[RMDB]
RNA sequence: GGGAACGACUCGAGUAGAGUCGAAAACUCUUGAGCUGAGCCGGUAUUGGUGCCUACAAACUCAUGAAGGUUGGCUUAGGUUCCAGGGCACAGGUAGAAGCAAAUUGAACCCUGCCAUUCGCCAAAAGUACCAAUCGGAAUUCGUUCCGAUUGGUACAAAAGAAACAACAACAACAAC
Reactivity to 2A3 in 0.01 (KOAc 150mM, MgCl2 10mM, bicine 150mM(pH8.5), 24C), signal-to-noise 2, nucleotides 027 to 126: c020u020c000u020u080g040a040g010c040u040g020a000g020c000c020g040g020u150a130u090u120g110g050u070g020c000c000u040a050c050a060a120a030c060u100c120a150u180g170a130a070g120g000u040u050g020g030c040u040u010a070g050g000u040u000c010c020a030g000g030g000c050a020c040a110g000g020u070a050g020a190a030g030c040a030a050a090u080u050g050a020a020c010c000c000u010g000c030c000a050u040u070c040g050c030c020a020a060a060a020
Reactivity to DMS in 0.01 (KOAc 150mM, MgCl2 10mM, bicine 150mM(pH8.5), 24C), signal-to-noise 2, nucleotides 027 to 126: c060u000c020u020u000g010a120g030c020u010g000a220g040c030c000g000g020u000a110u010u000g010g030u010g010c020c010u020a090c150a110a030a090c040u010c050a130u000g010a190a120g000g010u000u000g000g020c090u010u000a090g030g000u000u010c010c040a090g000g000g000c080a030c100a080g010g010u020a050g030a170a190g010c050a040a070a130u010u000g000a110a130c030c070c030u000g030c030c020a120u000u000c020g010c010c070a090a050a060a140
Source: RMDB library OK2TRN, as collected in RNAgym.
This 177-nucleotide RNA was probed chemically with 2A3 and DMS.
For DMS, 1,750 sequencing reads were counted.
2A3 adducts were read by reverse transcription with SuperScript II with manganese.
Conditions: 150 mM KOAc, 10 mM MgCl2 and 150 mM bicine (pH 8.5), 24 C.